This 170-nucleotide RNA was probed chemically with DMS and 2A3. DMS adducts were read by reverse transcription with MarathonRT. 2A3 adducts were read by reverse transcription with SuperScript II with manganese.
[RMDB]
RNA sequence: GGGAACGACUCGAGUAGAGUCGAAAAUCGGAUGUCGAUCCCCUCUCCCGUUCGGGAAAAGGGGGACUCCGGAACUCCCUGCAGGUUGGGCACGAAGCCCCCACCGGGCGCUCCCCUCGGCAGACCGUCACGGGCAACUUCGGUUGCCCGAAAAGAAACAACAACAACAAC
Reactivity to DMS in 0.01 (KOAc 150mM, MgCl2 10mM, bicine 150mM(pH8.5), 24C), signal-to-noise 1, nucleotides 027 to 129: u050c000g000g030a030u070g010u000c020g040a140u000c000c000c000c020u010c060u010c000c010c010g040u100u100c000g080g030g020a010a030a070a050g010g000g080g060g060a000c000u020c000c010g000g000a080a120c150u000c050c030c010u000g000c090a070g050g000u050u030g000g010g060c020a050c110g050a030a010g010c000c010c000c000c000a070c130c060g000g060g020c080g030c020u030c000c000c000c000u030c030g000g000c110a080g000a060c000c020g000u050c140a160
Reactivity to 2A3 in 0.01 (KOAc 150mM, MgCl2 10mM, bicine 150mM(pH8.5), 24C), signal-to-noise 3, nucleotides 027 to 129: u020c000g000g000a050u220g030u050c050g070a210u080c010c000c000c000u010c000u010c000c000c000g200u290u250c190g000g000g000a020a040a020a050g000g000g000g010g010a010c000u010c000c000g000g000a030a000c070u070c000c000c000u000g040c030a060g010g020u100u120g020g000g000c070a020c140g100a110a010g000c010c000c000c010c010a030c010c050g000g070g000c020g030c000u040c000c000c000c000u000c000g020g000c000a010g020a120c010c030g010u070c040a010

The DMS profile rests on 8,675 reads. Conditions: 150 mM KOAc, 10 mM MgCl2 and 150 mM bicine (pH 8.5), 24 C. Source: RMDB library 15KLIB, as collected in RNAgym.